[RMDB]
RNA sequence: GGGAACGACUCGAGUAGAGUCGAAAAUAUUCGAAGCCACCGGGGCCUUGUUGGCACCGCAGCAAACAGGACGCGUCGUCGCGACAACGGCAGGCUGGGCAACCGGCUGGUGCCGAACGUCGCUCGACAAGGCAAGGCAAUUCGUUGCCUUGCCUUGAAAAGAAACAACAACAACAAC
Reactivity to DMS in 0.01 (KOAc 150mM, MgCl2 10mM, bicine 150mM(pH8.5), 24C), signal-to-noise 5, nucleotides 027 to 126: u030a100u000u020c080g020a180a130g010c040c020a090c230c030g020g000g020g020c010c000u010u000g000u010u030g020g030c010a040c030c010g020c190a140g020c060a050a080a070c110a100g000g010a060c080g010c110g010u000c010g020u000c210g000c000g000a010c010a060a300c010g000g000c000a280g000g000c010u000g000g010g000c290a110a150c010c010g010g000c000u000g010g030u010g030c000c000g000a070a080c220g020u010c010g000c010u000c010g000a070
Reactivity to 2A3 in 0.01 (KOAc 150mM, MgCl2 10mM, bicine 150mM(pH8.5), 24C), signal-to-noise 5, nucleotides 027 to 126: u230a070u020u190c060g050a050a010g030c010c010a020c030c030g000g000g040g000c010c010u160u250g100u150u160g110g020c020a010c020c030g000c020a020g000c000a000a090a050c020a040g040g050a030c040g020c020g070u000c010g010u030c090g000c000g010a010c010a050a010c000g010g000c000a020g010g000c000u020g010g000g000c040a050a090c000c010g010g010c000u060g110g180u180g000c000c010g000a010a010c040g000u000c000g000c010u010c000g020a010
The record gives the reactivity of an RNA of 177 nucleotides to DMS and 2A3.
The RNA was probed in 150 mM KOAc, 10 mM MgCl2 and 150 mM bicine (pH 8.5) at 24 C.